[RMDB]
RNA sequence: GGGAACGACUCGAGUAGAGUCGAAAAUCUGAAGACGUAGGAACUUUUCACUAUGUUGCCCAGGCUAGACUUGAUCUUCUGGGCUCAACUGAUCCUCCUGCCUCAGCCUCUCAAGUAGCUGGGACAAUAAUAGGUGCAUGCCACUGCAUCUGACUCAUGAUUACAGUUACUUCGGUAACUGUAAUCAAAAAGAAACAACAACAACAAC
Reactivity to 2A3 in 0.01 (KOAc 150mM, MgCl2 10mM, bicine 150mM(pH8.5), 24C), signal-to-noise 5, nucleotides 027 to 156: u030c010u030g070a070a000g050a030c050g010u030a010g030g020a100a120c080u120u100u120u080c050a080c080u090a070u100g030u040u080g050c010c010c000a020g060g070c140u070a030g000a050c020u120u230g030a140u230c010u030u000c000u010g000g010g020c010u010c010a040a040c020u020g020a030u030c000c020u030c000c010u030g030c000c000u010c000a000g010c010c020u020c020u030c070a090a090g070u050a010g100c010u010g010g010g020a010c060a030a100u240a080a070u090a060g000g020u000g010c010a010u120g150c060c030a040c050u010g000c000a000u030c010u010g030a040c030u040c090a040
Reactivity to DMS in 0.01 (KOAc 150mM, MgCl2 10mM, bicine 150mM(pH8.5), 24C), signal-to-noise 2, nucleotides 027 to 156: u010c030u000g010a090a130g030a080c060g070u000a050g000g020a090a110c080u000u000u010u000c060a110c060u000a070u000g010u000u000g010c030c010c010a030g020g030c060u000a040g040a060c040u000u010g020a280u010c000u010u000c010u000g010g000g000c030u010c030a030a110c040u000g000a080u000c020c020u000c020c020u000g010c010c020u000c020a010g000c030c010u010c110u000c150a080a130g030u000a050g000c010u000g000g010g010a040c010a040a080u010a060a090u000a060g040g030u000g000c020a070u000g000c080c060a080c140u010g000c000a030u000c030u000g010a090c020u000c040a300